[RMDB]
RNA sequence: GGGAACGACUCGAGUAGAGUCGAAAAGGGGUCUCGGCUAGCUCUCGUUAAGACAUGCUCUACUGAAGCCUCCACGGUAGAGCAACAGCUUAACGGAGAGCUUGGACCCGAGACGGAGGCACCCAAACGCGACUGACGGUUCGCCGUCAGUCGCGAACAAUCUAGCUUGCUUCGGCAAGCUAGAUUGAAAAGAAACAACAACAACAAC
Reactivity to 2A3 in 0.01 (KOAc 150mM, MgCl2 10mM, bicine 150mM(pH8.5), 24C), signal-to-noise 1, nucleotides 027 to 156: g030g050g060g010u000c010u010c050g000g020c050u050a030g000c000u000c000u000c000g010u000u020a010a000g060a100c090a210u170g010c000u010c000u020a010c000u050g080a070a020g020c020c010u010c000c000a020c000g020g000u000a000g000a000g050c000a000a030c010a000g000c000u000u000a000a000c030g130g000a110g000a000g050c000u000u110g000g010a000c000c000c000g000a010g010a000c020g020g010a010g000g020c020a020c020c010c020a010a110a010c020g010c010g000a000c000u000g000a010c000g010g200u050u120c300g060c160c000g000u000c000a000g020u010c000g030c000g000a000a000